An RNA of 177 nucleotides, treated with DMS and 2A3 and read out base by base.
For DMS, 8,796 sequencing reads were counted.
The 2A3 profile rests on 10,547 reads.
Reactivities are given for positions 27 through 126.
The RNA was probed in 150 mM KOAc, 10 mM MgCl2 and 150 mM bicine (pH 8.5) at 24 C.
For 2A3 the reverse transcriptase was SuperScript II with manganese.
The data come from the RNA Mapping Database (RMDB), library OK1LIB.
RNA sequence: GGGAACGACUCGAGUAGAGUCGAAAAGACAUCACUUCGUGCAGCAUUAAGUCUGACGUGUGCUGGAAUUCGAAAGACGAAUAGAUCCUUGAUCAACACCAUGACAGAAUUACACAUGAACCAUGAAUGUAAAAGAACACUUCGGUGUUCUUUUACAAAAAGAAACAACAACAACAAC
Reactivity to DMS in 0.01 (KOAc 150mM, MgCl2 10mM, bicine 150mM(pH8.5), 24C), signal-to-noise 5, nucleotides 027 to 126: g020a160c090a030u010c040a030c090u000u010c030g030u010g000c010a030g000c100a120u010u020a120a130g020u030c020u000g000a070c090g000u020g000u000g020c050u000g030g000a080a060u000u000c010g000a110a120a130g000a090c030g010a060a050u030a070g030a100u000c030c060u000u020g030a110u010c080a030a070c080a030c080c020a050u010g000a060c050a060g010a080a050u010u000a070c090a040c040a030u000g010a090a100c070c030a050u020g000a090a160
Reactivity to 2A3 in 0.01 (KOAc 150mM, MgCl2 10mM, bicine 150mM(pH8.5), 24C), signal-to-noise 9, nucleotides 027 to 126: g050a010c020a040u060c030a030c040u160u140c080g080u160g080c020a010g000c010a070u110u200a150a060g040u040c020u030g020a020c000g020u030g010u020g010c030u020g000g050a040a050u050u020c020g060a110a060a030g090a070c030g010a020a010u040a060g090a060u030c020c000u050u100g020a060u090c030a030a040c000a020c050c010a030u050g010a010c010a010g100a060a060u110u070a040c040a010c010a040u060g040a030a020c060c010a050u090g080a100a050